[RMDB]
This 177-nucleotide RNA was probed chemically with DMS.

RNA sequence: GGGAACGACUCGAGUAGAGUCGAAAAGAUAUGGACCAGAACUACUUCCCGAUGAGCGAUGAAAGAGAUAGUUUCUCGGAAACGAGAAACUAUCUCUGGAGCUCUAAGGGAAGCUGGUCCUAAGUCACUCAAUACGCUUGUUCGCAAGCGUAUUGAGAAAAGAAACAACAACAACAAC
Reactivity to DMS in 0.01 (KOAc 150mM, MgCl2 10mM, bicine 150mM(pH8.5), 24C), signal-to-noise 1, nucleotides 027 to 126: g000a060u010a300u010g000g000a010c010c000a000g010a140a060c090u010a300c030u000u000c020c000c000g000a290u010g000a000g020c000g000a120u000g060a300a100a030g000a010g000a020u000a000g000u000u000u010c000u000c000g000g000a040a100a250c000g000a000g010a000a000a020c010u000a010u010c010u010c000u000g040g000a090g050c030u030c020u020a040a210g000g000g000a000a020g010c000u000g000g010u000c000c010u000a000a040g010u010c020a200
For DMS the reverse transcriptase was MarathonRT. The DMS profile rests on 1,022 reads. The reactions ran in a buffer of 150 mM KOAc, 10 mM MgCl2 and 150 mM bicine (pH 8.5), at 24 C.